Conditions: 150 mM KOAc, 10 mM MgCl2 and 150 mM bicine (pH 8.5), 24 C. The record gives the reactivity of an RNA of 177 nucleotides to 2A3 and DMS. The 2A3 profile rests on 1,483 reads. DMS (dimethyl sulfate) methylates the pairing face of unpaired adenines and cytosines. DMS adducts were read by reverse transcription with MarathonRT. The DMS profile rests on 1,022 reads. For 2A3 the reverse transcriptase was SuperScript II with manganese.
[RMDB]
RNA sequence: GGGAACGACUCGAGUAGAGUCGAAAAUCGAGGCAAUACUCGAUCGUUCAUACCUGAAUACAUAGGGUAUGAAACGCGAAACCCGCUGAAGUGAAACAUCUCAGUAAGCGGAGGAAAAGAAAGAGAACCAAACACUAAUCUUCGGAUUAGUGUUUGGAAAAGAAACAACAACAACAAC
Reactivity to 2A3 in 0.01 (KOAc 150mM, MgCl2 10mM, bicine 150mM(pH8.5), 24C), signal-to-noise 2, nucleotides 027 to 126: u030c000g010a030g040g000c110a140a090u030a170c000u000c000g030a020u010c000g010u010u000c000a000u000a000c000c000u020g000a030a010u060a110c040a020u040a020g000g000g020u010a000u020g000a040a090a010c010g000c010g090a100a030a040c020c020c000g000c010u050g010a140a250g170u020g090a120a140a020c080a250u150c050u020c030a000g020u010a030a010g010c040g010g030a050g100g040a110a100a000a080g080a040a060a010g080a000g020a060a030
Reactivity to DMS in 0.01 (KOAc 150mM, MgCl2 10mM, bicine 150mM(pH8.5), 24C), signal-to-noise 2, nucleotides 027 to 126: u010c060g000a050g030g000c020a120a120u010a130c000u000c000g000a040u020c000g000u000u000c000a010u010a000c010c000u000g000a260a150u020a090c090a030u000a300g000g000g000u000a010u000g010a010a010a010c010g010c110g010a040a090a140c100c000c010g010c020u000g000a130a140g000u010g000a030a110a210c240a130u000c020u000c010a020g010u000a110a070g000c010g010g000a110g000g010a000a020a060a140g010a070a070a070g000a070g000a120a300

The data come from the RNA Mapping Database (RMDB), library RFMREP.